Chemical mapping of a 177-nucleotide RNA with DMS and 2A3. The RNA was probed in 150 mM KOAc, 10 mM MgCl2 and 150 mM bicine (pH 8.5) at 24 C.
RNA sequence: GGGAACGACUCGAGUAGAGUCGAAAAGUGACCGGCCGAUCGGCCCAGAAACGGCUACGGCGGCUCGGGUGGACCUCGGCCGAUGCCCGCGCCUCGGCCGUGACCAGUUCGUCAGGAACGGCGGCCACAUCGAUGAUACCUUCGGGUAUCAUCGAUGAAAAGAAACAACAACAACAAC
Reactivity to DMS in 0.01 (KOAc 150mM, MgCl2 10mM, bicine 150mM(pH8.5), 24C), signal-to-noise 2, nucleotides 027 to 126: g010u040g020a160c040c040g000g070c000c000g000a060u020c120g000g020c040c000c060a050g000a000a080a090c080g000g050c000u080a170c090g040g020c050g000g030c010u010c060g030g000g040u000g020g000a190c040c060u010c030g000g000c000c000g030a120u000g000c060c000c080g000c140g000c030c060u030c080g000g040c000c000g000u000g000a240c080c160a020g020u000u000c000g060u090c170a140g020g010a040a070c000g070g000c000g000g010c010c000a300
Reactivity to 2A3 in 0.01 (KOAc 150mM, MgCl2 10mM, bicine 150mM(pH8.5), 24C), signal-to-noise 3, nucleotides 027 to 126: g120u090g050a060c020c020g010g000c010c000g040a120u080c060g110g000c000c000c010a040g130a020a140a030c060g010g000c040u100a060c050g100g020c020g000g010c020u050c060g010g050g020u120g070g020a090c010c050u030c030g020g010c030c010g020a030u100g030c010c050c010g060c020g050c000c020u090c080g050g000c020c000g000u000g010a040c000c010a010g020u020u010c080g130u200c190a020g000g130a030a040c030g000g000c000g000g020c000c010a020